[RMDB]
This 177-nucleotide RNA was probed chemically with DMS. Source: RMDB library TTRDEL, as collected in RNAgym.

RNA sequence: GGGAACGACUCGAGUAGAGUCGAAAAGAUAUGGAGGUCGGGAGUGGAUGGUUCGGAAACGAACCAAUCACGAAGAACGAGCCUCCUAAGUCAAAUCCUCCGUCACGGUUCGCCGUGACGGAGGAAAGUAAUCUAACACCUUCGGGUGUUAGAUUACAAAAGAAACAACAACAACAAC
Reactivity to DMS in 0.01 (KOAc 150mM, MgCl2 10mM, bicine 150mM(pH8.5), 24C), signal-to-noise 2, nucleotides 027 to 126: g010a010u010a300u000g000g020a030g000g020u000c000g000g000g000a090g030u000g000g000a040u000g000g010u010u000c000g020g000a040a080a170c000g000a020a020c000c000a020a020u010c000a020c020g000a090a170g000a090a200c020g010a100g000c000c000u010c010c000u000a030a030g010u000c040a090a100a150u000c020c000u010c010c000g000u000c000a010c000g000g010u000u010c200g000c030c000g020u000g000a000c000g000g000a000g000g010a000a000a050